[RMDB]
RNA sequence: GGGAACGACUCGAGUAGAGUCGAAAAGAAGAAAAAGAAACACGCGAACCUGGCAAAGGCCGCAGAGCCAGGAGCGUGAUAAACGCAGAAAGAUCUGCGGCCAAAAGCGAGAAGAACUCGCAAGAAACCACCUAAAUCACUUCGGUGAUUUAGGUGGAAAAGAAACAACAACAACAAC
Reactivity to DMS in 0.01 (KOAc 150mM, MgCl2 10mM, bicine 150mM(pH8.5), 24C), signal-to-noise 2, nucleotides 027 to 126: g020a110a090g000a030a070a030a110a060g000a160a070a080c040a000c020g000c000g010a170a120c000c010u000g020g020c010a110a030a150g000g020c000c020g000c020a000g010a050g010c000c000a000g040g010a080g000c000g000u000g000a040u070a010a050a040c140g060c190a090g000a180a030a030g000a000u000c000u020g020c000g000g000c000c030a050a130a040a150g000c010g000a000g000a120a200g000a100a060c000u000c000g010c000a190a000g000a140a100a080
Reactivity to 2A3 in 0.01 (KOAc 150mM, MgCl2 10mM, bicine 150mM(pH8.5), 24C), signal-to-noise 2, nucleotides 027 to 126: g080a040a000g120a000a070a070a020a010g140a040a140a000c010a000c010g000c000g020a090a070c020c000u000g010g000c020a050a150a170g060g000c020c010g050c010a000g000a000g000c020c000a000g020g010a010g010c000g010u000g010a000u050a000a080a000c050g000c090a030g090a130a060a020g050a040u000c000u000g000c000g030g000c000c000a000a130a000a000g010c000g010a010g000a240a000g020a080a030c010u010c010g010c000a000a000g050a040a030a000